The record gives the reactivity of an RNA of 170 nucleotides to DMS and 2A3.
RNA sequence: GGGAACGACUCGAGUAGAGUCGAAAAUACGUUAAAGGGUUAUGUUCUUGCUACCAUUAUUGUGUUUCUGUGUGCUGUACUGAUGUAUUUGUGUUUACCUACAUUUUCUAUGGCACCUGUUGAAUUUAUGCGGAAGCGUUCGCGCUUCCGAAAAGAAACAACAACAACAAC
Reactivity to DMS in 0.01 (KOAc 150mM, MgCl2 10mM, bicine 150mM(pH8.5), 24C), signal-to-noise 2, nucleotides 027 to 129: u090a120c170g040u040u030a100a120a100g030g030g030u010u030a070u020g000u000u000c050u070u020g010c040u030a030c040c040a000u010u050a060u030u070g040u030g020u000u000u000c060u000g010u020g020u050g040c020u030g030u000a020c050u060g020a000u050g020u000a000u000u000u000g030u020g010u030u000u000a120c000c070u050a090c150a030u030u020u030u000c060u030a050u020g010g070c100a080c100c000u010g010u000u050g000a040a130u000u000u000a100u070g000
Reactivity to 2A3 in 0.01 (KOAc 150mM, MgCl2 10mM, bicine 150mM(pH8.5), 24C), signal-to-noise 3, nucleotides 027 to 129: u000a040c050g010u000u030a080a040a190g150g000g000u130u070a100u180g030u000u020c070u150u110g000c010u040a050c020c050a050u060u100a040u060u300g000u000g020u060u020u010c040u040g040u020g050u050g030c010u020g000u030a000c000u010g050a000u000g000u040a040u070u060u080g290u000g110u060u080u110a000c000c000u060a030c000a130u030u070u030u000c110u040a080u040g020g000c040a000c000c000u000g000u000u000g030a060a130u020u110u030a120u080g000
It was measured as part of the RMDB library 15KLIB. For DMS the reverse transcriptase was MarathonRT. Values cover nucleotides 27 to 129.